[RMDB]
RNA sequence: GGGAACGACUCGAGUAGAGUCGAAAAGAGCUCCAGCGCCUUGGGACGGCAUCCGGAUAUCGGAUAAAUACAGUCCCGUGUGUCCGCAGCGUUUGCCCAAUAUCCAAAAUGAGACGGCGGCGCUGGAUCAGUAGCAGUGAUUCGUCACUGCUACUGAAAAAGAAACAACAACAACAAC
Reactivity to DMS in 0.01 (KOAc 150mM, MgCl2 10mM, bicine 150mM(pH8.5), 24C), signal-to-noise 5, nucleotides 027 to 126: g020a140g010c140u000c000c000a000g010c010g040c010c020u010u030g000g010g000a030c000g000g020c160a060u010c050c030g000g000a170u030a110u050c040g020g000a010u000a030a060a140u040a140c120a180g000u010c000c000c020g030u030g010u010g000u020c030c030g030c270a080g000c020g000u020u010u010g010c030c020c020a100a080u000a070u030c100c090a050a050a060a100u020g000a080g010a120c040g010g010c110g000g010c010g000c000u000g010g000a030
Reactivity to 2A3 in 0.01 (KOAc 150mM, MgCl2 10mM, bicine 150mM(pH8.5), 24C), signal-to-noise 6, nucleotides 027 to 126: g060a020g030c020u010c010c000a000g000c010g000c000c020u070u120g010g000g010a010c020g020g030c040a030u040c030c030g030g030a130u070a110u300c020g010g000a020u100a080a160a010u260a080c090a030g030u020c000c010c010g020u050g010u010g020u010c020c010g010c040a040g030c030g060u060u100u170g060c020c010c000a020a040u140a060u130c050c030a040a040a030a170u160g040a120g010a080c030g030g030c000g000g000c000g000c000u000g000g000a000